[RMDB]
RNA sequence: GGGAACGACUCGAGUAGAGUCGAAAAUAGUCAGCAUACGCCGCAACACGCGGGCGGCGUACCGUACAGAGAGAAGAAAAGGGGCAUAUUUCCCUGCUUGCAGCGAUGCGAGCAAAACAAAAAUUUCGAUUGGAUUUAAGUUCGCUUAAAUCCAAUCAAAAGAAACAACAACAACAAC
Reactivity to 2A3 in 0.01 (KOAc 150mM, MgCl2 10mM, bicine 150mM(pH8.5), 24C), signal-to-noise 1, nucleotides 027 to 126: u060a000g070u040c010a010g020c030a060u010a040c010g010c010c000g000c000a020a040c040a040c130g070c220g000g000g010c000g000g000c000g000u000a000c000c040g020u050a010c020a000g120a000g020a000g040a190a070g040a020a140a010a010g020g010g010g060c030a010u030a130u160u040u030c010c000c010u000g000c010u010u010g000c010a000g000c000g060a040u010g010c000g000a000g000c010a000a030a010a000c010a000a050a010a010a040u040u160u120c020
Reactivity to DMS in 0.01 (KOAc 150mM, MgCl2 10mM, bicine 150mM(pH8.5), 24C), signal-to-noise 2, nucleotides 027 to 126: u000a100g010u010c020a050g030c110a300u000a010c000g000c000c000g020c020a030a040c060a140c230g010c140g000g020g060c000g000g000c000g030u000a020c120c100g000u010a070c070a110g010a080g000a080g000a050a100g000a020a090a070a100g000g010g010g000c140a120u010a070u000u010u000c000c000c000u010g030c000u000u000g000c010a010g000c300g000a140u000g010c000g000a010g030c010a010a040a040a090c130a020a050a020a060a110u000u010u000c080

This 177-nucleotide RNA was probed chemically with 2A3 and DMS. Source: RMDB library RFMREP, as collected in RNAgym. For DMS, 1,213 sequencing reads were counted.